Structure probing data (2A3) for a 207-nucleotide construct. 2A3 adducts were read by reverse transcription with SuperScript II with manganese. The reactions ran in a buffer of 150 mM KOAc, 10 mM MgCl2 and 150 mM bicine (pH 8.5), at 24 C.

RNA sequence: GGGAACGACUCGAGUAGAGUCGAAAAACGAGUCCGUACGCGGACUCGAAGGGCCCCAGAAGACCAAGGGGCCCAAACCUACCACUCAUUAGAUGCAUGGAAAUCACAAGGUGAUACGUCACCUAGAACACGCUUUUAAGCUUCGGCUUAAAAGCAACAAGGCUAAAUCGUUCGCGAUUUAGCCUUGAAAAGAAACAACAACAACAAC
Reactivity to 2A3 in 0.01 (KOAc 150mM, MgCl2 10mM, bicine 150mM(pH8.5), 24C), signal-to-noise 2, nucleotides 027 to 156: a010c030g000a000g010u000c010c000g000u010a000c240g000c000g080g000a000c000u000c000g000a000a000g000g000g000c020c030c000c010a030g110a300a060g030a140c070c030a110a030g010g000g010g010c000c000c010a010a010a000c000c000u030a050c000c060a040c040u080c030a020u040u090a060g060a180u080g020c040a030u100g090g200a100a110a130u230c060a050c030a180a000g000g000u000g000a070u010a060c130g070u010c000a000c000c000u000a010g030a010a070c090a000c180g000c000u020u010u000u000a000a000g010c000u050u150c180g060g010c000u000u000a000a000a010a000g020c000a000a010
The 2A3 profile rests on 755 reads.